[RMDB]
RNA sequence: GGGAACGACUCGAGUAGAGUCGAAAACUCAGUACUUCUCUAAACUUUCAUUGCUAUUUGGACCUAAUCUUAGGAACCCUGUCGAACAACCCUUGUCAGUUCAGGCGAUAGCCGGCUUAAUGGAUGGCACCUAAACUGGGUUCGCCCAGUUUAGGUGAAAAGAAACAACAACAACAAC
Reactivity to 2A3 in 0.01 (KOAc 150mM, MgCl2 10mM, bicine 150mM(pH8.5), 24C), signal-to-noise 2, nucleotides 027 to 126: c030u020c020a030g070u060a100c020u110u020c010u010c010u100a070a160a070c010u070u050u060c080a070u030u050g080c030u060a060u170u130u060g040g030a020c010c010u060a120a140u130c060u110u030a020g050g140a080a100c020c020c030u030g000u050c020g040a090a070c040a050a030c010c000c010u020u080g070u080c030a030g040u040u100c020a000g040g000c010g070a080u130a040g000c020c040g000g000c060u020u130a060a020u050g040g050a050u060g090g040
Reactivity to DMS in 0.01 (KOAc 150mM, MgCl2 10mM, bicine 150mM(pH8.5), 24C), signal-to-noise 2, nucleotides 027 to 126: c030u000c040a100g050u000a060c050u010u000c020u000c020u010a070a090a150c070u010u010u000c040a080u000u010g020c090u000a040u000u000u000g000g010a160c040c010u010a070a160u010c100u010u010a090g050g000a040a130c040c030c000u000g020u010c050g000a020a090c070a090a090c040c010c020u000u010g000u020c080a070g010u000u000c060a090g010g000c020g000a140u010a060g000c010c050g030g000c030u010u000a040a150u010g010g000a060u000g010g020